An RNA of 207 nucleotides, treated with 2A3 and DMS and read out base by base.
Values are in units of 0.01, from 0 to 300, in steps of 10.
The RNA was probed in 150 mM KOAc, 10 mM MgCl2 and 150 mM bicine (pH 8.5) at 24 C.
For 2A3 the reverse transcriptase was SuperScript II with manganese.
[RMDB]
RNA sequence: GGGAACGACUCGAGUAGAGUCGAAAAGGCGUUGUGGCUGCUGUCGGAGCUGCACUCGCUGCAGGUAAAGCACUCAGAAACAUAAUGACCUCGGACCGUGCAACAGAUGAACCCGAUUCCAAACCAGAGGAAAACAAAGAAGAAAACAAAAAUGCAGAUUAGAAAAUCCAUUCGUGGAUUUUCUAAUAAAAGAAACAACAACAACAAC
Reactivity to 2A3 in 0.01 (KOAc 150mM, MgCl2 10mM, bicine 150mM(pH8.5), 24C), signal-to-noise 2, nucleotides 027 to 156: g030g010c040g030u010u010g060u040g040g010c040u040g060c020u080g090u120c060g060g010a020g020c020u020g000c000a030c030u090c040g040c060u020g000c030a010g000g010u070a040a030a030g010c010a010c060u060c030a010g090a090a160a000c030a040u190a210a080u130g040a010c010c010u000c030g040g030a010c030c000g030u040g040c020a050a080c040a090g080a100u120g040a060a020c000c000c040g030a030u060u030c030c010a070a200a170c010c000a030g010a040g080g000a000a080a010a090c020a080a050a000g060a050a020g030a020a100a040a010c050a050a140a030a010a000u050g020c080a030g030
Reactivity to DMS in 0.01 (KOAc 150mM, MgCl2 10mM, bicine 150mM(pH8.5), 24C), signal-to-noise 1, nucleotides 027 to 156: g000g000c090g050u000u000g020u010g020g080c000u020g000c030u000g040u000c040g020g010a110g000c060u030g040c010a180c040u010c100g040c000u000g000c040a070g020g000u000a070a050a140g000c010a110c070u020c030a130g010a190a020a040c070a060u000a110a090u020g000a100c020c010u000c020g030g010a100c050c030g050u000g070c050a080a150c070a110g040a160u000g030a040a130c000c000c040g020a140u000u010c000c020a010a070a100c070c030a130g030a120g000g000a100a030a060a030c060a000a060a180g000a090a140g010a070a090a050a120c020a020a040a030a110a050u010g050c070a080g010